An RNA of 177 nucleotides, treated with DMS and read out base by base. Conditions: 150 mM KOAc, 10 mM MgCl2 and 150 mM bicine (pH 8.5), 24 C. Source: RMDB library M2PK50, as collected in RNAgym.
[RMDB]
RNA sequence: GGGAACGACUCGAGUAGAGUCGAAAAUCUCUCUUGUUCGCAAGAGAGAAAAGAACGCCAAAGUGACGCAAACUUCCGCGUCAGGAAGGCGAUACGAGGUAAAAAGGGGGAUCUUCGGAUCCCCCAACAGAUUAAGCCUCUUCGGAGGCUUAAUCUGAAAAGAAACAACAACAACAAC
Reactivity to DMS in 0.01 (KOAc 150mM, MgCl2 10mM, bicine 150mM(pH8.5), 24C), signal-to-noise 1, nucleotides 027 to 126: u000c030u000c000u030c000u030u000g000u000u020c170g060c000a010a000g000a010g000a010g000a030a110a120a040g000a080a100c030g000c000c000a000a090a300g000u010g000a010c010g010c000a070a070a250c130u000u000c270c060g010c060g040u000c000a060g000g000a200a110g000g040c030g000a090u000a060c130g010a070g000g030u030a050a040a010a100a200g000g000g010g010g000a000u000c000u030u010c250g050g000a000u000c000c010c000c000c000a010a000